[RMDB]
RNA sequence: GGGAACGACUCGAGUAGAGUCGAAAAGAUAUGGAAUUGCUCAGGAUCUGUCCAACAGCAGGUAGGAACCGUCCUCGGAAACGAGGACUCAGUACUACCUGACAUGGACGGAGAAUUUGCAAUUCCUAAGUCAAACGGACUUGUUCGCAAGUCCGAAGUACCACAAGACCUUCGGGUCUUGUGGUACAAAAGAAACAACAACAACAAC
Reactivity to 2A3 in 0.01 (KOAc 150mM, MgCl2 10mM, bicine 150mM(pH8.5), 24C), signal-to-noise 1, nucleotides 027 to 156: g030a020u080a080u130g000g000a000a010u000u000g000c000u000c030a040g010g010a050u000c000u000g000u000c000c000a040a050c050a160g070c010a010g000g000u020a010g000g040a000a000c010c000g000u000c000c000u010c010g000g070a110a070a080c000g000a000g000g000a000c000u000c000a020g000u010a000c000u010a000c000c000u000g010a010c000a030u050g000g000a000c000g020g000a010g000a020a020u000u010u010g000c000a000a000u000u000c000c000u000a070a000g050u020c060a130a050a070c000g000g000a000c010u020u000g020u110u120c280g000c110a000a010g000u030c010c040g030a090a020